[RMDB]
Record summary: This 177-nucleotide RNA was probed chemically with DMS and 2A3.
RNA sequence: GGGAACGACUCGAGUAGAGUCGAAAAUAUCACUAGACAAUAACCGGAUGGGUAAAGUCUUUAAAAUGAUCGAGGGGAAAAUUAACCAUAUCCUCUCGUUGGUCUAAGCUCCCACAGAGUGUAGUGGCGAUUUUUUAGACUUCGGUCUAAAAAAUCGAAAAGAAACAACAACAACAAC
Reactivity to DMS in 0.01 (KOAc 150mM, MgCl2 10mM, bicine 150mM(pH8.5), 24C), signal-to-noise 1, nucleotides 027 to 126: u000a020u010c020a150c100u000a000g000a110c010a080a240u020a140a080c060c000g000g070a160u000g000g000g000u020a130a080a080g010u000c010u000u000u020a010a150a090a120u000g010a110u010c000g000a010g040g000g010g000a010a080a070a090u000u070a110a090c270c080a130u060a120u000c000c010u000c000u000c020g000u000u000g000g020u000c050u000a070a080g000c020u000c000c030c030a000c150a050g000a060g020u000g000u000a030g000u000g000g000
Reactivity to 2A3 in 0.01 (KOAc 150mM, MgCl2 10mM, bicine 150mM(pH8.5), 24C), signal-to-noise 1, nucleotides 027 to 126: u040a010u000c000a010c020u000a000g060a060c000a010a230u050a040a080c090c000g220g030a280u130g130g000g020u150a160a110a140g030u000c000u100u020u000a120a060a020a080u200g040a000u150c020g000a000g150g050g000g060a030a060a030a030u070u070a090a150c010c010a000u010a070u140c070c000u010c000u000c000g000u020u180g000g000u000c000u010a090a000g020c080u040c010c000c000a020c000a000g190a080g090u140g090u060a050g000u010g040g020
About this RNA: For 2A3 the reverse transcriptase was SuperScript II with manganese. Source: RMDB library RFM100, as collected in RNAgym. For 2A3, 413 sequencing reads were counted.